[RMDB]
RNA sequence: GGGAACGACUCGAGUAGAGUCGAAAAAGACAUACGUUCGCGUAUGUCUGACGGGCACCUGACGCUAAGGAAAUGCUCUAUGACAGGACACACUGAUUGUGAUACCUCGAGAUUUCGAUCUCGAGAAGGACUAUAGGCCUUUCGAGGCCUAUAGUCCAAAAGAAACAACAACAACAAC
Reactivity to 2A3 in 0.01 (KOAc 150mM, MgCl2 10mM, bicine 150mM(pH8.5), 24C), signal-to-noise 2, nucleotides 027 to 126: a000g000a000c020a000u010a000c000g010u010u050c200g000c020g120u010a000u010g010u010c020u000g030a020c020g000g050g000c030a020c030c000u040g070a070c090g020c140u070a050a020g090g000a060a090a060u110g010c020u000c020u040a140u130g070a050c030a040g020g030a010c000a010c010a020c080u120g140a220u220u060g040u030g070a100u050a090c000c010u000c010g010a000g000a010u060u050u100c160g050a010u000c000u010c000g010a000g020a010a020
Reactivity to DMS in 0.01 (KOAc 150mM, MgCl2 10mM, bicine 150mM(pH8.5), 24C), signal-to-noise 3, nucleotides 027 to 126: a030g010a020c010a020u000a000c010g020u010u000c210g070c020g000u000a000u000g010u000c000u000g000a080c120g010g000g010c060a050c040c020u000g010a090c120g010c110u000a070a090g010g010a050a050a100u010g010c050u010c030u010a100u010g010a150c070a010g000g000a090c030a070c030a070c060u010g010a130u000u000g020u020g000a190u000a110c180c000u000c010g010a000g000a020u000u000u000c190g000a030u000c000u010c000g000a000g000a070a090

The record gives the reactivity of an RNA of 177 nucleotides to 2A3 and DMS. DMS adducts were read by reverse transcription with MarathonRT. For 2A3, 1,761 sequencing reads were counted. The reactions ran in a buffer of 150 mM KOAc, 10 mM MgCl2 and 150 mM bicine (pH 8.5), at 24 C. 2A3 adducts were read by reverse transcription with SuperScript II with manganese.